RNA sequence: GGGAACGACUCGAGUAGAGUCGAAAAGAAAAUGGUACGCGACGCAGAAGCUAACGCCGAAGCUGACCGUAAGUUUGAAGAGCUGGUACAGACUCGCAACCAGGGCGACCAUCUGCUGCACAGCACCUCUCUAGUUCGAGUUCGCUCGAACUAGAGAAAAAGAAACAACAACAACAAC
Reactivity to 2A3 in 0.01 (KOAc 150mM, MgCl2 10mM, bicine 150mM(pH8.5), 24C), signal-to-noise 1, nucleotides 027 to 126: g050a000a030a000a020u170g090g030u020a000c000g010c010g010a010c040g000c010a010g010a090a000g020c000u050a140a010c060g000c000c000g020a000a000g010c000u000g010a000c000c000g030u050a050a040g050u050u100u130g150a110a070g050a060g060c010u000g020g000u040a030c000a000g050a030c000u010c040g010c020a010a120c080c060a110g110g180g000c010g010a010c010c000a030u040c010u020g080c140u010g000c090a090c010a300g020c020a010c000c000
Reactivity to DMS in 0.01 (KOAc 150mM, MgCl2 10mM, bicine 150mM(pH8.5), 24C), signal-to-noise 2, nucleotides 027 to 126: g010a070a030a040a060u000g030g030u000a000c010g000c030g010a300c300g000c010a000g000a220a110g050c010u000a140a280c200g000c000c010g000a300a160g020c010u000g000a230c300c010g000u010a060a220g000u000u000u000g000a130a100g030a080g010c030u000g000g010u000a030c010a000g010a020c110u000c000g000c030a050a080c180c110a100g000g000g010c020g020a030c060c180a110u010c020u000g010c090u000g010c050a090c020a010g000c000a110c090c090